Chemical mapping of a 177-nucleotide RNA with DMS and 2A3. The DMS profile rests on 2,316 reads. 2A3 adducts were read by reverse transcription with SuperScript II with manganese. The data come from the RNA Mapping Database (RMDB), library M2PK50. DMS adducts were read by reverse transcription with MarathonRT. The RNA was probed in 150 mM KOAc, 10 mM MgCl2 and 150 mM bicine (pH 8.5) at 24 C.

RNA sequence: GGGAACGACUCGAGUAGAGUCGAAAAGGGUGAUCGUUCGCGAUCACCCAAAGAAGCACGAAACGCCAAGAAAUCCCGGAACAUUGGUAUGGUAGCCUGAGAAAACUGACAAGUUCGCUUGUCAGAACGUAAUUCCUAGGUUCGCCUAGGAAUUACGAAAAGAAACAACAACAACAAC
Reactivity to DMS in 0.01 (KOAc 150mM, MgCl2 10mM, bicine 150mM(pH8.5), 24C), signal-to-noise 3, nucleotides 027 to 126: g010g010g020u000g000a010u000c000g020u000u000c170g050c020g050a010u000c000a010c010c010c000a000a030a030g000a120a100g020c050a070c090g000a080a100a130c100g000c000c030a060a110g000a060a120a090u020c000c000c020g000g000a030a060c120a110u000u000g010g000u000a070u000g010g010u010a090g010c010c030u010g000a130g010a060a070a060a110c010u000g000a000c000a000a020g000u000u030c230g010c000u000u000g000u000c000a010g000a030a090
Reactivity to 2A3 in 0.01 (KOAc 150mM, MgCl2 10mM, bicine 150mM(pH8.5), 24C), signal-to-noise 1, nucleotides 027 to 126: g030g000g010u010g010a010u010c000g030u070u020c160g010c010g100a000u000c000a000c000c000c000a020a000a010g000a020a020g070c030a000c060g060a060a190a050c100g050c020c040a010a010g050a070a130a000u070c000c040c000g020g050a080a040c070a090u040u120g040g000u060a130u120g030g020u050a020g030c010c030u040g010a030g040a060a140a030a030c020u000g000a000c000a010a000g000u000u100c230g030c110u020u020g000u000c000a000g000a000a000